[RMDB]
Structure probing data (DMS) for a 177-nucleotide construct.
RNA sequence: GGGAACGACUCGAGUAGAGUCGAAAAGAUAUGGAUAUCGGCUAGGGAGAUGACAUCGGAAACGAUGUGAUCAUCGACGAUCUAGUCCGAUAUCCUAAGUCAAAACAAACUGGUUCGCCAGUUUGAAGAUUGCCGUGAUGUUCGCAUCACGGCAAUCAAAAGAAACAACAACAACAAC
Reactivity to DMS in 0.01 (KOAc 150mM, MgCl2 10mM, bicine 150mM(pH8.5), 24C), signal-to-noise 1, nucleotides 027 to 126: g030a040u010a300u000g000g000a020u000a000u000c000g030g140c000u000a020g000g150g000a030g000a010u000g030a030c030a030u000c000g010g010a130a150a230c000g050a000u000g000u000g000a100u000c030a030u000c000g000a230c230g010a000u000c000u000a040g020u000c000c000g000a000u000a000u000c000c020u000a010a060g030u000c020a190a060a130a300c000a010a000a000c000u010g000g000u010u000c300g030c000c020a020g000u000u010u000g010a080a100
For DMS the reverse transcriptase was MarathonRT.
For DMS, 715 sequencing reads were counted.